[RMDB]
RNA sequence: GGGAACGACUCGAGUAGAGUCGAAAAGAUAUGGAGCGUUCGUUGAGCUCCCCACCGUAUGAACUACAGAGAAAGUAUCGGAAACGAUACUAAUCUGCAUACGAGGCUCAACGAACGCUCCUAAGUCCAUACAGUAUAGGUUCGCCUAUACUGUAUGAAAAGAAACAACAACAACAAC
Reactivity to 2A3 in 0.01 (KOAc 150mM, MgCl2 10mM, bicine 150mM(pH8.5), 24C), signal-to-noise 6, nucleotides 027 to 126: g050a040u130a060u250g010g000a010g000c010g000u000u000c000g000u010u020g020a000g000c000u060c000c000c020c010a030c000c000g020u000a010u020g040a140a120c120u280a100c300a010g030a000g020a100a300a010g030u000a010u000c010g020g030a130a040a040c010g000a000u000a000c000u000a000a040u000c000u020g000c000a000u000a000c010g000a010g030g000c000u000c000a000a000c000g000a000a010c000g000c000u010c000c000u000a000a000g010u020c010
Reactivity to DMS in 0.01 (KOAc 150mM, MgCl2 10mM, bicine 150mM(pH8.5), 24C), signal-to-noise 8, nucleotides 027 to 126: g000a080u000a300u010g000g010a010g020c000g030u000u000c010g020u000u000g010a030g020c020u000c080c060c000c030a300c120c010g000u000a010u000g000a060a070c140u020a300c000a010g010a010g000a140a120a020g010u000a010u000c010g010g000a100a120a190c010g010a010u000a000c010u000a030a270u000c000u000g000c000a020u000a000c000g000a140g020g000c000u000c000a010a010c010g000a010a010c000g010c000u000c000c000u000a000a070g000u000c050
The record gives the reactivity of an RNA of 177 nucleotides to 2A3 and DMS. 2A3 adducts were read by reverse transcription with SuperScript II with manganese. DMS adducts were read by reverse transcription with MarathonRT. The reactions ran in a buffer of 150 mM KOAc, 10 mM MgCl2 and 150 mM bicine (pH 8.5), at 24 C. For DMS, 13,793 sequencing reads were counted.